[RMDB]
Notes:
Structure probing data (2A3 and DMS) for a 207-nucleotide construct. The reactions ran in a buffer of 150 mM KOAc, 10 mM MgCl2 and 150 mM bicine (pH 8.5), at 24 C.

RNA sequence: GGGAACGACUCGAGUAGAGUCGAAAAGGCGGUCUUCGGACCGCCAAAUCCUAAGUCCCAUCGAUGAGAUCCCUGUGAGCAACAGCCCAUCGGAAACGAUGGGACAUGCUCAUUGGGAUCGAGAUGGGAUAUGGAAAAAUCCCUGCUUCGGCAGGGAGAUUUAUAACGGGUUCGCCCGUUAUAAAUCAAAAGAAACAACAACAACAAC
Reactivity to 2A3 in 0.01 (KOAc 150mM, MgCl2 10mM, bicine 150mM(pH8.5), 24C), signal-to-noise 2, nucleotides 027 to 156: g010g000c000g030g010u030c030u060u120c300g110g020a000c010c000g050c000c000a000a010a010u000c000c000u010a080a040g020u000c000c000c000a000u000c010g180a200u130g110a050g000a140u000c000c000c010u020g010u000g000a000g000c000a010a080c030a140g030c000c000c000a010u010c010g030g010a080a070a040c010g000a000u000g000g000g000a020c000a010u020g000c000u000c000a000u000u010g000g010g000a000u000c000g000a010g000a000u000g010g000g000a000u010a010u020g000g030a020a110a030a030a030u090c060c060c000u000g000c000u010u040c250g110g000c000a000g000g000g000a010
Reactivity to DMS in 0.01 (KOAc 150mM, MgCl2 10mM, bicine 150mM(pH8.5), 24C), signal-to-noise 2, nucleotides 027 to 156: g000g010c020g050g010u000c010u000u020c300g060g010a020c000c000g010c000c000a030a010a010u000c000c010u000a080a280g020u000c000c000c010a030u010c020g000a260u010g020a290g010a010u000c000c010c000u000g010u000g010a050g020c010a040a040c120a120g020c000c000c010a000u000c010g010g010a260a110a200c000g050a000u000g010g000g000a000c040a060u000g010c000u000c010a010u000u020g000g020g020a010u000c020g000a020g010a060u000g000g020g020a000u000a030u000g000g000a030a080a060a090a170u010c000c000c000u000g010c020u000u000c300g050g000c000a030g000g060g010a000

Reactivities are given for positions 27 through 156.